Source: RMDB library OK1LIB, as collected in RNAgym. Structure probing data (DMS and 2A3) for a 177-nucleotide construct. The RNA was probed in 150 mM KOAc, 10 mM MgCl2 and 150 mM bicine (pH 8.5) at 24 C. Values cover nucleotides 27 to 126.

RNA sequence: GGGAACGACUCGAGUAGAGUCGAAAAGACGCCUAAUGGCGAAAAUGUAAAAUCAACUACACAUCAGAUAAAUACAACUGCUAAAUCUCGGAACUAGUUGAUCUAGUCCAGCGGUGAGAUCCGCAGAAUGACUGAUAUGCUUCGGCAUAUCAGUCAUAAAAGAAACAACAACAACAAC
Reactivity to DMS in 0.01 (KOAc 150mM, MgCl2 10mM, bicine 150mM(pH8.5), 24C), signal-to-noise 2, nucleotides 027 to 126: g010a250c000g050c000c000u000a120a140u030g010g040c000g000a020a080a160a100u040g000u010a010a050a130a020u020c060a010a080c100u000a050c090a070c120a040u020c140a040g000a060u030a120a060a100u040a030c270a080a130c010u010g000c050u020a080a070a120u060c000u000c090g000g000a110a030c070u000a040g000u020u010g030a150u030c010u010a060g020u000c030c030a090g000c060g030g010u030g000a060g010a030u030c010c170g040c050a070g020a090
Reactivity to 2A3 in 0.01 (KOAc 150mM, MgCl2 10mM, bicine 150mM(pH8.5), 24C), signal-to-noise 4, nucleotides 027 to 126: g050a000c010g050c000c000u160a290a210u300g000g020c010g090a030a070a000a050u160g000u090a030a070a050a020u030c020a030a010c020u100a030c040a000c010a070u200c030a010g050a160u130a050a120a010u100a080c060a090a060c090u050g000c010u060a030a100a140u030c060u060c060g060g000a010a020c000u010a000g000u000u180g040a050u020c040u000a010g050u010c000c000a060g000c030g010g070u090g030a060g010a030u060c030c000g030c030a000g140a030